An RNA of 207 nucleotides, treated with 2A3 and read out base by base. 2A3 adducts were read by reverse transcription with SuperScript II with manganese.

[RMDB]
RNA sequence: GGGAACGACUCGAGUAGAGUCGAAAAUCCUAAGUCUUGCUUUGUCAGAUCUGAAAUGGCUCGAAGAACUAUUUCGGAAACGAAAUAGGGAGAGCCAUAUGUAGGAUCUUGGAUUUAAGCAAGAUAUGGAAAAGAUGUAUCCUUCGGGAUACAUCAAGUUAUUAUCGGCGUUCGCGCCGAUAAUAACAAAAGAAACAACAACAACAAC
Reactivity to 2A3 in 0.01 (KOAc 150mM, MgCl2 10mM, bicine 150mM(pH8.5), 24C), signal-to-noise 2, nucleotides 027 to 156: u030c010c000u050a150a020g010u010c000u000u000g000c010u030u000u020g010u000c000a010g000a000u000c010u020g000a030a040a010u000g000g000c000u000c020g230a300a030g000a050a020c000u000a010u010u000u010c020g020g050a070a110a100c010g000a000a000a000u000a000g010g010g000a030g000a000g000c040c000a000u000a000u010g000u000a020g000g000a000u000c000u020u080g030g010a040u280u100u300a000a000g000c000a000a000g000a000u030a060u040g050g010a040a110a040a140g000a000u010g000u010a000u010c020c000u020u080c300g080g000g000a000u000a000c000a010u000c000a000a010
Record summary:
It was measured as part of the RMDB library RNAMAK.